[RMDB]
RNA sequence: GGGAACGACUCGAGUAGAGUCGAAAAGAACAUACACAGGUAGGUCAGGAGGUCUGGAGUAGCAUACUGUAAUAACUGUAUAUGCUGCUUGUGUGCUUCAGAAUGUGUCCAUUUUGGUGGACAGUACCUAAAGCACCCGUUUCGACGGGUGCUUUAGAAAAGAAACAACAACAACAAC
Reactivity to DMS in 0.01 (KOAc 150mM, MgCl2 10mM, bicine 150mM(pH8.5), 24C), signal-to-noise 1, nucleotides 027 to 126: g000a080a050c070a100u000a040c110a060c100a070g000g010u000a060g040g000u000c040a060g020g030a070g000g030u010c040u010g010g000a030g040u000a000g030c010a030u000a020c020u000g000u000a140a070u010a070a110c040u000g010u010a100u010a030u000g020c000u000g000c030u010u000g010u010g010u000g010c070u010u010c030a030g000a050a060u020g010u000g010u000c000c010a030u000u000u000u010g030g050u010g000g000a020c020a040g020u000a070c180
Reactivity to 2A3 in 0.01 (KOAc 150mM, MgCl2 10mM, bicine 150mM(pH8.5), 24C), signal-to-noise 1, nucleotides 027 to 126: g020a010a020c020a000u120a050c080a010c000a070g050g100u050a000g030g120u070c050a020g040g020a050g010g050u000c020u030g080g010a020g000u000a010g000c010a000u000a050c010u040g040u120a090a130u120a250a220c020u000g050u060a040u020a000u130g010c000u010g010c010u110u010g050u000g020u020g010c010u060u060c010a040g010a130a020u090g040u000g020u000c000c000a030u040u080u130u300g170g010u000g000g000a010c000a000g010u080a080c000